[RMDB]
Conditions: 150 mM KOAc, 10 mM MgCl2 and 150 mM bicine (pH 8.5), 24 C. Structure probing data (2A3) for a 207-nucleotide construct.

RNA sequence: GGGAACGACUCGAGUAGAGUCGAAAACAGAAGUUCAAGUGCAUCACUUGCAAAGGCACAGGAGUUAAGGCAUGAACACGCAACACCAUCGGGGCACGGCACCCAAGCCGUUCCAAUCCGCGCUUGCACCGUGGCAGAACAGCCAGCGCGCGCUGUAUCCUUCUUCUAGCUUCGGCUAGAAGAAGGAAAAAGAAACAACAACAACAAC
Reactivity to 2A3 in 0.01 (KOAc 150mM, MgCl2 10mM, bicine 150mM(pH8.5), 24C), signal-to-noise 1, nucleotides 027 to 156: c060a010g130a210a020g040u090u030c090a110a060g060u080g030c020a050u140c060a170c100u000u050g040c160a100a080a070g150g000c020a030c030a000g090g000a020g020u100u100a090a030g010g000c030a040u050g020a070a020c070a000c120g050c030a060a050c030a060c010c010a030u130c100g080g000g060g000c070a010c010g000g000c050a020c020c040c010a000a020g000c000c020g040u100u000c010c010a030a070u050c030c000g070c000g000c000u010u070g020c030a020c050c110g050u060g130g000c000a060g010a150a090c020a000g010c010c000a000g040c060g020c000g010c050g000c050u010g020u010a070